Source: RMDB library OK2TST, as collected in RNAgym.
Chemical mapping of a 177-nucleotide RNA with 2A3 and DMS.
2A3 adducts were read by reverse transcription with SuperScript II with manganese.
DMS adducts were read by reverse transcription with MarathonRT.
Conditions: 150 mM KOAc, 10 mM MgCl2 and 150 mM bicine (pH 8.5), 24 C.
RNA sequence: GGGAACGACUCGAGUAGAGUCGAAAAGGGCCGCCCGCACGUCGAACUGUGACAUGAGGGUCUCGGCAUGUUCGUAGAUCGUCUCGUACCGGAGGAUACCAUACCGGGAGAAAGGAGGCCGCCCGUAACAACUACUCGCAUUCGUGCGAGUAGUUGUAAAAGAAACAACAACAACAAC
Reactivity to 2A3 in 0.01 (KOAc 150mM, MgCl2 10mM, bicine 150mM(pH8.5), 24C), signal-to-noise 1, nucleotides 027 to 126: g000g000g000c010c000g020c020c010c020g030c030a030c060g060u000c010g060a170a110c080u180g040u150g150a000c000a010u100g010a020g100g060g090u010c040u010c100g080g040c040a040u060g040u090u240c060g010u030a010g050a120u020c020g040u020c100u000c080g050u110a060c010c020g040g000a030g040g070a090u110a180c060c010a010u040a200c000c060g000g080g000a040g030a000a060a000g060g080a020g000g020c010c060g010c000c010c010g000u060a000
Reactivity to DMS in 0.01 (KOAc 150mM, MgCl2 10mM, bicine 150mM(pH8.5), 24C), signal-to-noise 1, nucleotides 027 to 126: g010g000g070c000c060g030c010c010c070g020c100a060c090g010u000c040g030a040a160c250u010g030u010g000a020c040a000u000g010a080g000g000g000u000c070u010c040g010g000c050a060u000g000u010u020c070g030u020a040g010a130u000c020g040u000c020u010c050g000u000a210c050c020g020g010a140g010g040a130u010a070c170c110a140u020a080c030c000g000g020g000a090g020a020a120a090g040g010a180g010g010c000c000g010c030c000c010g030u000a090

For DMS, 804 sequencing reads were counted.